[RMDB]
RNA sequence: GGGAACGACUCGAGUAGAGUCGAAAAUUUAAGAGCGUAGAUGUCUCUGUCACGAUACGAGUAAGUGACUCUCGUGUACUACUGACGAUUGAGACAGAGACAUUUAUGCUCAGUGUCAGUCAAGGAAUAGUUUCCUACUCUUCGGAGUAGGAAACUAAAAAGAAACAACAACAACAAC
Reactivity to DMS in 0.01 (KOAc 150mM, MgCl2 10mM, bicine 150mM(pH8.5), 24C), signal-to-noise 2, nucleotides 027 to 126: u010u010u000a160a150g000a020g000c010g030u000a020g010a010u000g000u000c000u000c010u010g000u000c010a090c010g010a010u000a070c020g000a140g000u000a020a080g010u010g000a020c030u000c210u020c190g010u000g040u010a020c010u010a050c010u000g010a120c030g000a090u000u000g010a020g010a010c000a010g010a010g010a030c000a000u000u010u000a000u000g010c000u010c000a010g000u000g030u000c090a070g020u000c090a060a090g000g010a110a130
Reactivity to 2A3 in 0.01 (KOAc 150mM, MgCl2 10mM, bicine 150mM(pH8.5), 24C), signal-to-noise 1, nucleotides 027 to 126: u110u160u150a150a020g000a000g000c000g000u000a010g000a020u010g030u050c000u020c000u000g000u000c000a020c060g010a000u040a010c010g000a000g010u020a300a060g010u130g150a010c010u000c030u010c110g180u180g050u030a020c010u000a000c000u010g230a160c030g000a010u020u030g030a040g000a020c000a000g000a000g000a000c000a000u000u000u000a000u000g010c020u000c000a000g010u000g040u030c040a020g020u040c090a060a070g110g030a130a070